[RMDB]
RNA sequence: GGGAACGACUCGAGUAGAGUCGAAAAGAUUGAUCAUGAGUCAGAACCAGAAAUCCAGUGAUACCGGUGACAAAUCGGCCAGCGAACGCUUGGCGGCGCUGAAGCUGGCGCUCCAGAACGACCUGCGAGUACCUAGCGGUUUCGACCGCUAGGUACUAAAAGAAACAACAACAACAAC
Reactivity to DMS in 0.01 (KOAc 150mM, MgCl2 10mM, bicine 150mM(pH8.5), 24C), signal-to-noise 1, nucleotides 027 to 126: g010a180u000u000g020a050u000c070a000u000g020a080g000u000c010a080g020a300a090c020c000a000g000a070a160a130u000c020c070a040g020u000g000a140u010a160c090c010g030g020u000g000a080c150a030a050a030u000c160g020g020c050c010a000g000c020g000a020a110c050g000c050u000u000g050g010c140g000g010c020g050c050u000g020a040a110g000c030u020g000g000c060g040c040u000c010c050a050g020a060a160c090g010a060c090c090u000g010c110g000
Chemical mapping of a 177-nucleotide RNA with DMS. Conditions: 150 mM KOAc, 10 mM MgCl2 and 150 mM bicine (pH 8.5), 24 C. Reactivities are rounded to 0.1 and cut off at 0 and 3. DMS (dimethyl sulfate) methylates the pairing face of unpaired adenines and cytosines. Source: RMDB library OK2TST, as collected in RNAgym. Reactivities are given for positions 27 through 126.